[RMDB]
RNA sequence: GGGAACGACUCGAGUAGAGUCGAAAAAGGACCGAGGCCUGUUGCUGUGGAGGCUGUGCUAUUGCAAUAGAUGCAGUUUUCCAAGCGCCUGUGGAAUACGCUCUUACAGUUAACAGAUCAGAUGCGACAGCGCACGAUAUUUCGAUAUCGUGCGCUGAAAAGAAACAACAACAACAAC
Reactivity to 2A3 in 0.01 (KOAc 150mM, MgCl2 10mM, bicine 150mM(pH8.5), 24C), signal-to-noise 3, nucleotides 027 to 126: a000g080g000a020c040c000g000a040g020g160c050c100u100g030u100u050g000c040u010g010u060g030g010a040g000g030c000u010g000u000g000c000u010a060u110u210g120c050a140a050u030a130g140a150u040g030c000a000g010u000u000u170u050c010c010a030a020g000c000g030c030c010u060g020u120g020g010a060a030u080a090c000g030c020u000c000u080u090a040c000a030g010u110u210a120a030c020a020g040a100u070c110a090g050a160u130g050c000g050a080
Reactivity to DMS in 0.01 (KOAc 150mM, MgCl2 10mM, bicine 150mM(pH8.5), 24C), signal-to-noise 1, nucleotides 027 to 126: a110g040g000a130c050c050g000a070g020g000c080c050u000g010u000u000g020c030u030g030u000g000g000a020g000g020c000u010g050u000g030c000u000a100u010u010g040c300a100a070u010a000g000a110u000g000c010a070g000u000u000u030u000c000c020a040a080g000c030g000c030c060u010g000u000g020g020a050a030u000a070c110g000c000u010c000u030u070a030c150a020g000u050u050a060a070c030a070g000a090u000c120a060g000a070u070g020c050g000a240